Annotation:
This 207-nucleotide RNA was probed chemically with 2A3.
RNA sequence: GGGAACGACUCGAGUAGAGUCGAAAAGGGGUCUAUCAUCUCUAGCGUGUAGGCUUGGAUUUACGGACUAGUUACUGAAGCCUCCACGGUAAGGUCCGUUGUCAGCCUAUCGGGUGAUAGACGGAGGCACCCAAACCCAUGGAUUCGUCCAUGGGAAACUCUACAGGUGCUUCGGCACCUGUAGAGUAAAAGAAACAACAACAACAAC
Reactivity to 2A3 in 0.01 (KOAc 150mM, MgCl2 10mM, bicine 150mM(pH8.5), 24C), signal-to-noise 1, nucleotides 027 to 156: g040g020g000g000u000c010u000a020u000c000a020u000c000u040c090u180a160g140c090g090u260g000u100a000g000g020c060u060u300g190g020a110u250u230u240a160c000g000g000a000c000u010a090g300u070u020a000c000u000g060a040a000g000c000c000u000c000c000a010c000g000g020u000a040a040g010g000u030c000c020g140u160u300g010u020c020a000g010c000c000u040a040u050c030g020g010g000u010g000a000u010a000g000a000c000g000g000a000g000g000c000a060c000c000c000a010a060a060c020c000c000a000u000g000g000a010u010u180c270g050u070c120c000a000u050g000g040g000a020a010

Source: RMDB library RNAMAK, as collected in RNAgym. Conditions: 150 mM KOAc, 10 mM MgCl2 and 150 mM bicine (pH 8.5), 24 C. The 2A3 profile rests on 820 reads.